[RMDB]
RNA sequence: GGGAACGACUCGAGUAGAGUCGAAAACGGAGGUCUACACACGAUCGUCUCACGGUCUAUGAUGGUGCAACGCAAAGGCAGAGUAGGGCGCGUGAUGCCCGGCGUCUACGUAUACUUCUAUGAUCCUGCGGAGAUGCGUCCCAUCCGGAAGAUCGACCAUGAAAGACUUGUUCGCAAGUCUUUCAUGAAAAGAAACAACAACAACAAC
Reactivity to DMS in 0.01 (KOAc 150mM, MgCl2 10mM, bicine 150mM(pH8.5), 24C), signal-to-noise 3, nucleotides 027 to 156: c060g010g000a120g030g030u000c040u000a170c080a090c080a100c070g020a070u000c000g030u000c090u000c080a130c020g020g000u000c030u010a100u000g030a070u010g030g050u020g030c040a090a050c050g000c020a040a110a170g040g040c030a080g010a150g020u010a080g030g030g040c010g010c080g060u000g000a090u010g000c020c020c040g030g020c030g030u000c000u010a040c020g010u000a090u010a000c030u010u030c030u000a120u010g010a050u010c000c010u010g020c000g000g010a100g010a130u000g010c010g000u000c030c000c000a070u000c020c050g000g010a090a060g020a080u000c010g010a190c140
Reactivity to 2A3 in 0.01 (KOAc 150mM, MgCl2 10mM, bicine 150mM(pH8.5), 24C), signal-to-noise 5, nucleotides 027 to 156: c070g050g020a030g020g100u020c040u080a050c060a010c020a030c110g020a040u030c010g100u010c030u010c040a050c010g020g000u000c030u050a070u130g030a010u030g020g010u110g050c070a100a040c010g000c030a060a080a080g110g000c020a020g000a020g070u080a040g000g040g020c040g000c030g050u080g040a060u120g020c050c140c020g050g010c020g010u030c020u080a030c050g050u080a050u050a160c040u110u090c030u060a080u100g020a050u070c040c000u000g000c010g000g060a140g020a070u070g000c010g020u070c000c000c000a010u020c030c030g070g060a060a000g010a020u040c020g030a040c080